Structure probing data (2A3 and DMS) for a 177-nucleotide construct. It was measured as part of the RMDB library TTRDES. For 2A3, 6,577 sequencing reads were counted. 2A3 adducts were read by reverse transcription with SuperScript II with manganese.

[RMDB]
RNA sequence: GGGAACGACUCGAGUAGAGUCGAAAAGAUAUGGACCCAGCACAGCUUUUGACGUCCGACAUUCGGAAACGAAUGUACGGACGAUAAGCUGGCUGGGUCCUAAGUCAAAGAUGUCUUCGGACAUCAAGAAUCGAAAUAUGUUCGCAUAUUUCGAUUCAAAAGAAACAACAACAACAAC
Reactivity to 2A3 in 0.01 (KOAc 150mM, MgCl2 10mM, bicine 150mM(pH8.5), 24C), signal-to-noise 3, nucleotides 027 to 126: g020a000u070a050u130g000g000a000c010c010c010a000g020c230a240c010a090g010c020u190u240u300u300g300a170c050g030u020c010c000g000a010c010a010u000u010c000g040g050a050a090a050c010g000a010a000u070g070u270a080c020g000g000a000c010g000a010u000a010a010g020c000u000g000g000c010u000g000g020g010u000c010c000u000a000a000g000u010c000a030a020a020g000a000u020g000u000c000u000u060c200g130g000a000c000a000u010c010a000a060
Reactivity to DMS in 0.01 (KOAc 150mM, MgCl2 10mM, bicine 150mM(pH8.5), 24C), signal-to-noise 5, nucleotides 027 to 126: g000a050u010a300u010g000g000a020c000c000c000a030g010c010a140c000a020g010c000u000u000u010u000g020a250c080g030u000c000c000g020a050c000a010u000u010c000g000g000a100a120a170c000g010a010a010u010g000u000a120c020g020g000a010c000g000a010u000a020a010g040c000u000g000g000c000u010g000g000g010u010c000c000u000a000a070g000u000c040a150a130a170g000a020u000g010u000c000u000u020c220g030g000a020c010a010u000c000a100a120